[RMDB]
The record gives the reactivity of an RNA of 207 nucleotides to 2A3.
The reactions ran in a buffer of 150 mM KOAc, 10 mM MgCl2 and 150 mM bicine (pH 8.5), at 24 C.
It was measured as part of the RMDB library M2RFPK.
The 2A3 profile rests on 1,026 reads.
For 2A3 the reverse transcriptase was SuperScript II with manganese.
RNA sequence: GGGAACGACUCGAGUAGAGUCGAAAAACGAGUCCGUACGCGGACUCGAAGGGCCCCAGAAGACCAAGGUGCCCAAACCUACCACUCAUUAGAUGCAUGGAAAUCACUAGGUGAUACGUCACCUAGAACACGCUUUUAAGCUUCGGCUUAAAAGCAAUCCACAUUGAAUCUUCGGAUUCAAUGUGGAAAAAGAAACAACAACAACAAC
Reactivity to 2A3 in 0.01 (KOAc 150mM, MgCl2 10mM, bicine 150mM(pH8.5), 24C), signal-to-noise 3, nucleotides 027 to 156: a020c000g000a010g040u020c010c020g010u010a020c300g000c020g080g000a000c000u000c000g020a010a000g010g010g020c010c050c010c010a080g100a300a050g030a140c100c120a170a060g000g000u020g000c000c000c020a080a050a040c020c010u050a070c040c000a030c030u070c040a120u110u150a080g090a160u080g140c180a070u090g000g210a110a160a110u220c080a000c040u000a010g000g000u000g000a020u040a050c240g040u030c000a000c010c020u000a000g000a020a010c080a000c040g000c000u050u000u000u000a000a000g000c000u010u090c200g100g000c000u000u000a000a000a000a000g000c000a000a000